[RMDB]
RNA sequence: GGGAACGACUCGAGUAGAGUCGAAAAUGUCAUGCACAUACGCCGGCGUGGCGGAACCGGGAGACGCGGCAGACUCAAAAUCUGCUGGACGCAUGUCCGUGUGGGUUCGAGUCCCACCGCCGGCACGAUUAGAGUUUAAAUUCGUUUAAACUCUAAUAAAAGAAACAACAACAACAAC
Reactivity to DMS in 0.01 (KOAc 150mM, MgCl2 10mM, bicine 150mM(pH8.5), 24C), signal-to-noise 9, nucleotides 027 to 126: u000g010u000c050a120u010g020c120a050c070a080u000a110c190g010c000c010g010g010c000g010u000g000g010c020g010g000a020a010c220c200g010g010g010a020g000a300c010g010c010g000g000c010a010g010a010c020u010c300a080a080a120a240u000c000u000g000c000u000g000g010a020c010g010c280a070u010g010u000c000c000g000u000g010u000g000g000g000u000u000c040g000a300g000u000c000c000c000a020c010c010g010c010c000g000g010c020a020c120g000
Reactivity to 2A3 in 0.01 (KOAc 150mM, MgCl2 10mM, bicine 150mM(pH8.5), 24C), signal-to-noise 7, nucleotides 027 to 126: u080g030u030c050a100u300g050c090a040c010a050u180a090c140g000c010c000g000g000c000g000u010g010g000c010g010g010a030a020c110c070g080g300g020a010g000a000c000g010c000g020g000c000a000g010a010c010u040c140a090a100a020a070u010c000u010g000c000u020g000g000a010c010g090c180a150u300g000u000c000c000g000u010g000u010g000g000g000u000u000c000g000a000g010u010c000c000c000a000c010c010g000c010c000g010g000c000a000c000g000

Source information
Structure probing data (DMS and 2A3) for a 177-nucleotide construct. Source: RMDB library OK2TST, as collected in RNAgym. Conditions: 150 mM KOAc, 10 mM MgCl2 and 150 mM bicine (pH 8.5), 24 C.